[RMDB]
Structure probing data (2A3 and DMS) for a 177-nucleotide construct.
For 2A3 the reverse transcriptase was SuperScript II with manganese.
The RNA was probed in 150 mM KOAc, 10 mM MgCl2 and 150 mM bicine (pH 8.5) at 24 C.
For DMS, 2,180 sequencing reads were counted.
RNA sequence: GGGAACGACUCGAGUAGAGUCGAAAACAUGUACCCUUCGGGGUACAUGAACAUAACGCGGGCGUGGGACACCGCCGGAGCUAGCCUCUGAUAGUCCCAGUAUUAGGUGCGCCUUCGGGCGCACCAAUCAUACUGUUGCUUUCGAGCAACAGUAUGAAAAAGAAACAACAACAACAAC
Reactivity to 2A3 in 0.01 (KOAc 150mM, MgCl2 10mM, bicine 150mM(pH8.5), 24C), signal-to-noise 2, nucleotides 027 to 126: c000a000u000g010u000a010c020c010c000u010u060c240g030g000g000g000u000a000c000a000u020g000a020a000c000a090u220a170a060c160g000c000g030g010g020c190g150u050g000g010g010a000c010a010c050c000g000c020c020g000g000a010g000c020u100a020g020c030c000u010c020u010g030a030u020a080g000u000c000c000c000a010g000u030a170u120u270a030g000g010u000g000c000g030c010c020u050u110c300g070g000g040c050g000c010a000c010c000a020a000
Reactivity to DMS in 0.01 (KOAc 150mM, MgCl2 10mM, bicine 150mM(pH8.5), 24C), signal-to-noise 2, nucleotides 027 to 126: c000a010u000g000u000a000c000c010c000u000u010c180g040g010g020g000u000a000c000a000u000g010a050a100c130a110u010a100a180c180g030c010g000g000g030c170g020u010g010g010g000a040c010a140c010c010g020c000c060g010g000a020g010c030u010a090g010c160c010u010c020u000g020a170u010a080g000u000c000c010c000a090g010u000a060u010u000a100g010g010u000g000c000g000c000c000u000u010c170g020g000g040c000g030c000a000c010c000a000a030